RNA sequence: GGGAACGACUCGAGUAGAGUCGAAAACCCCCAAGUUUCGACUUGGGGGAAUUAAUAUCAGCGGUAAAUAAUUAGCUCGCGUUACCGCUGAACGCGAGCAUAGAGCAAUGCGCUUCGGCGCAUUGAACUACAAAGUGGGUUUCGACCCACUUUGUAGAAAAGAAACAACAACAACAAC
Reactivity to 2A3 in 0.01 (KOAc 150mM, MgCl2 10mM, bicine 150mM(pH8.5), 24C), signal-to-noise 3, nucleotides 027 to 126: c000c010c020c000c000a000a000g010u000u040u130c130g090a000c000u000u010g000g000g000g000g010a010a000u150u120a100a070u060a050u060c000a000g010c000g230g160u220a080a080a040u080a040a060u120u160a050g010c010u000c020g010c000g020u010u010a120c010c010g000c010u000g010a000a010c010g000c000g000a000g020c010a020u100a030g120a010g000c010a000a020u010g000c000g000c010u040u070c300g060g030c000g000c000a000u000u000g000a000a000
Reactivity to DMS in 0.01 (KOAc 150mM, MgCl2 10mM, bicine 150mM(pH8.5), 24C), signal-to-noise 2, nucleotides 027 to 126: c000c000c010c000c000a020a000g000u000u000u010c110g010a030c000u000u000g010g010g010g000g000a000a000u000u000a070a100u000a120u000c000a010g000c000g000g000u010a020a070a030u000a030a030u000u010a150g020c000u000c010g010c010g000u000u010a090c020c020g000c000u000g000a000a020c000g000c000g000a010g040c000a160u000a050g000a140g010c010a020a000u000g010c000g010c000u000u010c190g000g010c010g010c000a000u000u000g000a030a170